[RMDB]
Structure probing data (2A3 and DMS) for a 177-nucleotide construct. It was measured as part of the RMDB library TTRDES. The reactions ran in a buffer of 150 mM KOAc, 10 mM MgCl2 and 150 mM bicine (pH 8.5), at 24 C. 2A3 adducts were read by reverse transcription with SuperScript II with manganese. Reactivities are given for positions 27 through 126. The 2A3 profile rests on 2,997 reads.
RNA sequence: GGGAACGACUCGAGUAGAGUCGAAAAGAUAUGGACGACACUGAGGACAUGCUAAUGUUGUCGGAAACGACAACGAUAGCAACAGCCUUUGUCGUCCUAAGUCAAAAGUGAAGCUUCGGCUUCACAACUCUUCACAAUCCUUCGGGAUUGUGAAGAGAAAAGAAACAACAACAACAAC
Reactivity to 2A3 in 0.01 (KOAc 150mM, MgCl2 10mM, bicine 150mM(pH8.5), 24C), signal-to-noise 2, nucleotides 027 to 126: g030a010u030a010u050g000g000a000c020g000a000c010a020c210u190g140a080g080g000a030c150a300u300g040c000u020a010a090u170g030u030u020g000u000c000g000g000a000a020a000c000g000a020c000a010a000c020g030a050u030a010g020c000a090a280c110a130g000c020c010u040u020u060g010u000c000g000u010c000c000u020a000a010g000u000c020a000a080a140a000g010u000g000a000a000g000c010u060u180c300g200g000c000u050u000c060a010c000a010a020
Reactivity to DMS in 0.01 (KOAc 150mM, MgCl2 10mM, bicine 150mM(pH8.5), 24C), signal-to-noise 2, nucleotides 027 to 126: g000a020u000a130u000g000g000a000c000g000a050c000a010c300u020g000a030g000g030a040c190a150u010g010c000u010a000a210u010g060u000u000g000u000c000g010g010a060a010a120c000g010a010c000a030a010c010g020a130u010a010g000c010a040a060c300a090g010c090c010u000u000u000g000u000c000g000u000c000c000u000a000a080g000u000c010a120a050a050a100g030u010g000a020a000g010c010u000u020c260g060g010c010u000u000c000a000c010a030a120